An RNA of 207 nucleotides, treated with 2A3 and read out base by base. Values cover nucleotides 27 to 156. The data come from the RNA Mapping Database (RMDB), library M2RFPK. The 2A3 profile rests on 623 reads.
RNA sequence: GGGAACGACUCGAGUAGAGUCGAAAACGUAAAGGGCGAGCUUUUGUCCGGACUGGUUCCGCCGUGAUCGGGCCAUGCAAUAGUUGCCAACGACAACUAUGCUCCGGUUGCUCAGGCAGCGUAACGCACAAUGGAACAACCUUCGGGUUGUUCCAAACAUCCCCGAGAGAUUCGUCUCUCGGGGAUGAAAAGAAACAACAACAACAAC
Reactivity to 2A3 in 0.01 (KOAc 150mM, MgCl2 10mM, bicine 150mM(pH8.5), 24C), signal-to-noise 2, nucleotides 027 to 156: c010g020u040a050a040a230g030g150g000c050g020a080g000c030u040u140u130u120g040u140c040c040g010g030a060c050u090g000g010u270u260c010c010g090c050c020g130u080g100a090u070c020g010g010g050c060c040a010u050g010c050a030a300u010a020g000u000u010g030c040c070a100a060c060g110a150c000a000a000c030u040a010u010g030c000u040c000c010g000g000u020u010g000c020u000c050a040g050g000c020a030g000c050g100u070a140a010c040g020c020a010c050a060a290u060g010g020a000a000c000a000a000c000c010u080u140c190g050g000g000u000u000g000u000u020c000c000a000a000a000